Chemical mapping of a 177-nucleotide RNA with 2A3. Conditions: 150 mM KOAc, 10 mM MgCl2 and 150 mM bicine (pH 8.5), 24 C.
RNA sequence: GGGAACGACUCGAGUAGAGUCGAAAACUCGCUCAACAGACAAAAGGCGAUCCGCUCAUCAACAAGGGUUUUGUGGAGUGCUAAUCUCUUUCCUUGAGAUAGCCCGGCGCAGUUCCACUGCAUCCCGCGUGACGGCCAAUUUCGAUUGGCCGUCACGAAAAGAAACAACAACAACAAC
Reactivity to 2A3 in 0.01 (KOAc 150mM, MgCl2 10mM, bicine 150mM(pH8.5), 24C), signal-to-noise 2, nucleotides 027 to 126: c000u000c010g010c030u110c050a000a120c040a090g120a020c020a150a050a010a010g050g020c000g020a040u000c000c040g040c030u020c000a100u040c020a000a080c010a130a220g120g040g010u020u080u090u130g080u040g030g080a060g000u050g030c040u070a120a110u060c000u000c000u040u160u180c010c000u030u130g000a000g000a000u060a000g040c020c000c020g060g000c030g000c040a070g000u110u050c030c020a000c010u000g040c020a060u030c000c000c000g000